Conditions: 150 mM KOAc, 10 mM MgCl2 and 150 mM bicine (pH 8.5), 24 C.
An RNA of 207 nucleotides, treated with DMS and 2A3 and read out base by base.
Reactivities are given for positions 27 through 156.
For 2A3 the reverse transcriptase was SuperScript II with manganese.
For DMS, 2,108 sequencing reads were counted.
RNA sequence: GGGAACGACUCGAGUAGAGUCGAAAAGCACAUCUUCGGAUGUGCAAAAAGCGUACUACAGAUGGAGGUGCUAUAGACAGUGGUGAGAACUCCCAAAUAGGAGACACCACCGAAGCACUGACAUCUGUAUCGCAAAAAAGGCUUGUUCGCAAGCCAAGAGAUUGUACCGAUUCGUCGGUACAAUCUCAAAAGAAACAACAACAACAAC
Reactivity to DMS in 0.01 (KOAc 150mM, MgCl2 10mM, bicine 150mM(pH8.5), 24C), signal-to-noise 1, nucleotides 027 to 156: g010c040a020c000a010u000c000u000u000c300g000g010a020u000g020u020g030c020a000a020a090a090a060g000c030g060u000a090c050u000a010c010a070g160a060u010g010g000a300g000g030u000g080c000u000a170u000a100g000a220c130a020g000u010g060g000u010g020a140g020a070a190c010u010c040c000c040a060a080a180u020a060g030g010a030g010a120c010a000c000c020a030c000c010g010a130a050g000c030a030c000u010g000a300c010a020u000c020u030g000u000a020u000c030g000c020a000a000a030a090a230a050g030g000c010u000u000g000u000u010c180g040c000a060a030g030c000c000a050a300
Reactivity to 2A3 in 0.01 (KOAc 150mM, MgCl2 10mM, bicine 150mM(pH8.5), 24C), signal-to-noise 3, nucleotides 027 to 156: g000c020a010c000a000u010c000u020u060c240g090g020a000u000g000u000g000c010a030a020a020a000a020g050c050g050u110a070c030u000a010c010a000g230a000u000g000g030a020g050g010u010g010c020u050a040u140a250g110a080c170a070g030u010g250g000u020g010a150g060a150a080c020u040c030c060c010a170a290a150u250a110g000g010a000g020a080c000a000c010c000a010c000c000g040a040a000g010c000a000c000u010g020a010c000a000u000c000u000g000u000a000u030c010g000c000a000a030a000a000a000a130g000g000c010u020u030g020u120u080c170g000c110a000a000g000c000c000a010a000